[RMDB]
RNA sequence: GGGAACGACUCGAGUAGAGUCGAAAAGAUAGCUCGUUCGCGAGCUAUCAAAUAGGCGCAGUGGGCUAGCGCCACUCAAAUGCCCGAAAGGAAGAGAGAGAAAAAGGUGGUCCUUCGGGACCACCAAUCUGUGAUAAACCUUCGGGUUUAUCACAGAAAAAGAAACAACAACAACAAC
Reactivity to DMS in 0.01 (KOAc 150mM, MgCl2 10mM, bicine 150mM(pH8.5), 24C), signal-to-noise 1, nucleotides 027 to 126: g000a010u000a000g010c010u000c010g000u010u010c180g020c010g050a000g000c010u000a000u000c010a010a100a110u000a140g030g020c000g040c010a120g040u010g030g000g000c040u010a080g010c030g010c010c000a040c010u010c060a020a030a100u020g010c000c000c010g020a060a100a130g010g000a070a030g000a090g000a080g000a130g000a060a030a050a140a100g000g000u000g030g000u000c000c020u000u020c260g020g010g000a000c000c000a000c000c010a030a010